[RMDB]
RNA sequence: GGGAACGACUCGAGUAGAGUCGAAAAGAUGAGGCACAGGUUGCAGCGUAAGUGCAGGGGGAGUUCUCCCUUCACACUUACAAACCGUGUGAAGGUGGAGAAGACACUUGAGAACUUAGGUCUCAGAGAUAGGAGUCUAGUUCGCUGGAUUUCUAUCAAAAGAAACAACAACAACAAC
Reactivity to 2A3 in 0.01 (KOAc 150mM, MgCl2 10mM, bicine 150mM(pH8.5), 24C), signal-to-noise 9, nucleotides 027 to 126: g070a050u060g010a010g010g000c010a000c010a030g020g010u020u040g010c030a020g020c020g050u060a030a030g010u030g030c020a020g010g000g000g000g000a050g020u020u000c000u000c000c000c000u000u000c000a000c000a000c000u050u130a050c040a020a050a020c050c020g000u000g000u000g010a010a010g020g040u080g040g020a010g000a030a010g040a000c020a010c010u020u030g020a010g000a040a010c000u020u020a050g010g030u000c000u000c000a020g010a000
Reactivity to DMS in 0.01 (KOAc 150mM, MgCl2 10mM, bicine 150mM(pH8.5), 24C), signal-to-noise 9, nucleotides 027 to 126: g010a090u010g000a050g000g000c020a060c070a060g000g010u000u010g010c060a070g000c120g010u020a030a050g020u010g010c040a080g000g000g000g010g010a140g010u010u010c010u000c010c000c000u000u000c010a030c000a000c000u010u020a120c280a080a090a130c300c190g000u000g000u000g000a010a010g000g020u020g010g000a020g010a040a040g000a160c080a050c040u000u010g000a090g000a050a040c040u010u010a100g010g000u000c010u000c010a040g000a180
This 177-nucleotide RNA was probed chemically with 2A3 and DMS. For 2A3 the reverse transcriptase was SuperScript II with manganese. The data come from the RNA Mapping Database (RMDB), library OK1LIB. The reactions ran in a buffer of 150 mM KOAc, 10 mM MgCl2 and 150 mM bicine (pH 8.5), at 24 C.